Source information:
Chemical mapping of a 207-nucleotide RNA with DMS and 2A3. It was measured as part of the RMDB library M2RFPK. For DMS the reverse transcriptase was MarathonRT.
[RMDB]
RNA sequence: GGGAACGACUCGAGUAGAGUCGAAAAGAGUUCGGUUGGAGCGACAAGUAUUUAGCUCGAGAUAGCUAAAUCACCUCGGUAUGAUUAGGGUGAGACCUAGGAACCGUAGGGGUAUUCUCAAAGGAAGGUUACCGAACAACCUUCGGGUUGUUCGGAAGAUGCAGGAAAGAUUCGUCUUUCCUGCAUCAAAAGAAACAACAACAACAAC
Reactivity to DMS in 0.01 (KOAc 150mM, MgCl2 10mM, bicine 150mM(pH8.5), 24C), signal-to-noise 2, nucleotides 027 to 156: g010a070g030u000u010c050g000g040u000u000g000g040a090g070c040g010a120c070a060a100g020u000a050u010u000u010a030g030c010u000c050g020a230g030a190u000a080g030c020u010a030a010a050u000c000a060c010c020u000c010g010g030u000a070u010g010a220u000u000a060g020g000g010u000g030a280g000a160c010c010u000a060g010g010a080a050c030c040g010u010a070g000g000g010g030u010a050u000u000c020u000c040a080a080a160g020g000a050a040g020g000u010u000a230c010c000g000a010a030c000a000a010c000c020u000u010c300g020g020g070u000u000g020u000u010c000g010g000a010a020
Reactivity to 2A3 in 0.01 (KOAc 150mM, MgCl2 10mM, bicine 150mM(pH8.5), 24C), signal-to-noise 3, nucleotides 027 to 156: g070a010g030u070u100c080g050g030u060u090g060g050a050g030c020g050a040c050a040a050g040u060a070u020u020u010a010g000c000u010c060g030a040g010a120u140a010g000c010u020a000a010a020u010c010a020c010c000u010c040g010g040u290a160u180g050a070u040u060a010g020g010g010u040g100a090g030a090c010c000u010a000g000g030a030a010c010c010g020u070a020g000g010g000g040u010a060u160u050c090u030c020a080a080a010g080g010a030a020g030g050u070u120a050c000c000g010a000a000c000a000a000c020c000u040u050c070g030g010g000u000u000g000u000u000c000g000g010a000a000